[RMDB]
RNA sequence: GGGAACGACUCGAGUAGAGUCGAAAAAAAGCGAAAAACGAGGUCUGCAUGCUGCUUCUUAACUAUCUGCGCUCAGUACCCAACCCUUCAUCCAGCGAGGUACCAUGCACCCAGGAAGAGGUCCAGUGGUAUCACAGCGUCAUAAAUUGUAAAAAUGAAUUGAUUUCAUUUUCGAAUGAAAUCAAUUAAAAGAAACAACAACAACAAC
Reactivity to 2A3 in 0.01 (KOAc 150mM, MgCl2 10mM, bicine 150mM(pH8.5), 24C), signal-to-noise 6, nucleotides 027 to 156: a000a000a000g100c090g040a110a090a010a000a010c030g020a040g020g020u010c010u050g020c040a060u100g020c030u020g010c010u090u040c000u140u110a090a080c040u060a080u100c030u070g000c020g000c010u010c030a010g030u050a030c010c000c000a000a060c010c010c000u060u080c040a090u070c040c060a030g020c030g060a100g040g020u020a050c010c000a010u090g030c060a030c000c010c010a020g050g050a040a020g090a030g010g010u010c020c040a060g020u070g070g020u000a000u060c010a040c030a050g000c000g010u010c010a030u100a170a120a070u140u160g060u130a050a080a100a020a040u170g030
Reactivity to DMS in 0.01 (KOAc 150mM, MgCl2 10mM, bicine 150mM(pH8.5), 24C), signal-to-noise 2, nucleotides 027 to 156: a080a010a060g030c090g020a110a070a050a100a080c010g040a060g030g010u000c060u010g010c020a180u000g050c020u010g000c000u000u000c040u000u000a060a050c060u000a090u000c040u000g020c050g030c030u000c030a090g050u020a140c050c000c020a070a090c040c010c010u030u000c060a110u000c040c030a100g030c040g000a130g000g040u000a020c010c030a070u020g000c060a070c050c010c010a180g060g030a150a070g000a060g020g020u000c000c050a130g000u000g040g020u000a010u000c030a090c090a070g010c040g000u020c220a060u000a080a090a040u000u000g000u000a040a050a070a070a110u010g000